[RMDB]
RNA sequence: GGGAACGACUCGAGUAGAGUCGAAAAUCGAGGCAAUAACAAGCAAAAAAAUAAAAGUUCAGUACAAAGAUUAUAUUGUCGAUGAGGCUGAAUCAUUGAUAGCAGAAAAUACAGUAAUUAAAGACCCGCUAUGCGUAAUGUUCGCAUUACGCAUAGCAAAAGAAACAACAACAACAAC
Reactivity to DMS in 0.01 (KOAc 150mM, MgCl2 10mM, bicine 150mM(pH8.5), 24C), signal-to-noise 2, nucleotides 027 to 126: u040c010g070a100g000g000c030a010a030u030a060a130c180a100a070g010c050a000a000a030a170a050a150a110u020a020a000a080a150g020u000u010c020a000g030u010a050c030a000a030a140g010a040u000u020a080u010a100u040u000g010u040c010g020a170u020g000a090g050g020c040u000g010a010a010u000c110a130u020u020g000a060u000a060g000c030a090g010a000a030a050a060u090a060c060a060g000u030a000a040u010u010a050a020a050g000a200c000c020c020
Reactivity to 2A3 in 0.01 (KOAc 150mM, MgCl2 10mM, bicine 150mM(pH8.5), 24C), signal-to-noise 4, nucleotides 027 to 126: u080c020g030a080g050g080c070a040a040u100a130a040c070a040a110g030c040a060a010a050a000a010a130a000u210a040a150a030a010g030u040u010c040a010g000u020a070c010a010a080a000g040a000u080u060a070u080a070u240u270g020u000c020g030a030u060g020a020g220g010c030u030g040a020a020u030c030a120u070u210g020a050u070a030g060c050a030g090a130a040a030a000u170a020c070a010g020u170a080a000u150u110a030a080a080g070a050c000c000c030